Conditions: 150 mM KOAc, 10 mM MgCl2 and 150 mM bicine (pH 8.5), 24 C. An RNA of 177 nucleotides, treated with 2A3 and DMS and read out base by base. The 2A3 profile rests on 1,079 reads. The DMS profile rests on 847 reads. Values cover nucleotides 27 to 126. Source: RMDB library OK2TRN, as collected in RNAgym.
[RMDB]
RNA sequence: GGGAACGACUCGAGUAGAGUCGAAAAUCGAACGUGAACAUAAUCCUGAACAUACUACAAGAUCACCGACAGCACGACAAUUUCGAAUUGCAGAAUGCACUCAACUCCUGCAGUACAGUGAUCAAUGUGUGAGACUAAACUUCGGUUUAGUCUCACAAAAAGAAACAACAACAACAAC
Reactivity to 2A3 in 0.01 (KOAc 150mM, MgCl2 10mM, bicine 150mM(pH8.5), 24C), signal-to-noise 2, nucleotides 027 to 126: u050c030g010a040a090c030g000u110g040a020a000c040a050u230a140a010u120c040c020u050g010a020a040c070a070u130a070c030u030a030c030a060a130g040a060u030c000a000c020c000g040a000c010a050g030c050a030c040g040a010c060a070a080u080u100u140c080g050a030a010u030u030g000c000a000g110a290a030u080g000c040a030c050u030c010a020a050c040u030c050c020u050g000c000a000g000u040a110c020a030g000u000g000a030u020c080a070a120u140g030
Reactivity to DMS in 0.01 (KOAc 150mM, MgCl2 10mM, bicine 150mM(pH8.5), 24C), signal-to-noise 2, nucleotides 027 to 126: u000c060g000a040a030c200g040u000g020a040a060c000a070u020a090a070u000c020c010u000g030a130a070c090a050u000a070c080u000a090c140a040a150g010a030u000c010a040c020c030g000a090c290a050g000c040a040c130g020a070c120a050a080u000u000u000c070g000a080a050u000u000g060c000a060g000a020a050u000g020c040a070c120u010c060a090a100c080u010c020c010u000g000c010a020g000u000a020c060a020g000u000g000a060u000c040a090a130u020g000